Record summary: This 177-nucleotide RNA was probed chemically with DMS and 2A3. The 2A3 profile rests on 4,639 reads. Source: RMDB library M2PK90, as collected in RNAgym. Values cover nucleotides 27 to 126. DMS adducts were read by reverse transcription with MarathonRT.

RNA sequence: GGGAACGACUCGAGUAGAGUCGAAAAUACAUCCGGCAGCGGUCAGGUAAGGCAAACCACGGUUUGGAGGGUGGUUCUCGGCUGAGACCGCCGCGAGCUCUAUCUGCGGUCCAAAAUAAAAAUUUAACAAGUAGUUAUACUUCGGUAUAACUACUUGAAAAGAAACAACAACAACAAC
Reactivity to DMS in 0.01 (KOAc 150mM, MgCl2 10mM, bicine 150mM(pH8.5), 24C), signal-to-noise 5, nucleotides 027 to 126: u010a120c130a110u020c020c030g010g000c050a100g010c070g010g010u000c060a130g010g000u000a060a100g000g020c050a110a050a040c030c020a030c060g020g010u000u000u000g000g010a100g020g000g010u010g000g010u000u000c070u000c090g010g010c060u010g010a120g000a020c020c020g010c020c030g020c060g000a090g010c050u000c070u000a060u000c050u000g000c030g010g000u010c010c040a050a050a070a100u010a040a060a050a060a120u010u010u010a040a210
Reactivity to 2A3 in 0.01 (KOAc 150mM, MgCl2 10mM, bicine 150mM(pH8.5), 24C), signal-to-noise 4, nucleotides 027 to 126: u120a000c000a040u020c010c010g050g010c000a010g010c010g060g020u040c060a070g040g040u080a090a040g040g000c020a040a030a020c010c000a030c060g000g120u070u140u160g160g030a120g040g120g010u010g020g020u080u000c060u030c020g130g010c040u040g020a020g050a070c010c020g000c000c010g030c010g010a020g000c010u010c010u080a140u060c040u070g010c010g000g030u020c010c010a050a050a040a020u290a070a090a020a030a040u100u160u120a080a010